[RMDB]
RNA sequence: GGGAACGACUCGAGUAGAGUCGAAAACGUUGUCAUCGACAACACCCUAUGCAUUCAUGCUCUGUAAGGAUGCGCCGAAAGGUGAGCAAGCCCGAGUUGCCCAGACCUGUAAUGCAACACUUUAGAGAAAACCCGAAGCAGUUCGCUGCUUCGGGAACUGGAUGAAUAGGUUCGCCUAUUCAUCCAGAAAAGAAACAACAACAACAAC
Reactivity to 2A3 in 0.01 (KOAc 150mM, MgCl2 10mM, bicine 150mM(pH8.5), 24C), signal-to-noise 2, nucleotides 027 to 156: c080g000u000u010g020u010c080a260u060c300g020a000c000a000a010c010a060c000c000c010u060a040u070g030c000a010u000u020c050a060u190g000c010u000c000u030g040u040a040a000g000g000a020u010g020c000g000c010c000g080a140a030a020g000g020u030g050a020g000c010a010a010g030c000c010c020g120a060g010u050u070g030c000c000c040a020g010a100c010c040u020g060u140a020a100u130g060c030a050a030c000a020c090u100u140u180a080g000a000g030a170a070a040a070c020c000c000g000a000a000g010c000a000g040u060u120c200g010c090u000g000c000u000u000c000g000g000g000a010a000
Reactivity to DMS in 0.01 (KOAc 150mM, MgCl2 10mM, bicine 150mM(pH8.5), 24C), signal-to-noise 1, nucleotides 027 to 156: c180g000u010u000g020u010c030a180u010c040g010a030c000a020a060c030a120c040c010c000u010a140u010g030c050a060u000u000c040a130u000g030c060u020c080u010g000u010a300a230g000g000a010u000g010c020g020c060c020g040a080a080a190g000g040u000g000a160g010c020a120a190g010c020c060c010g000a080g080u030u000g010c000c080c030a160g000a060c040c030u010g040u000a000a050u010g010c000a040a040c040a160c030u010u000u000a100g000a130g000a060a100a080a120c000c000c000g010a020a010g020c000a050g010u000u000c300g000c030u020g030c000u000u000c000g010g000g000a010a000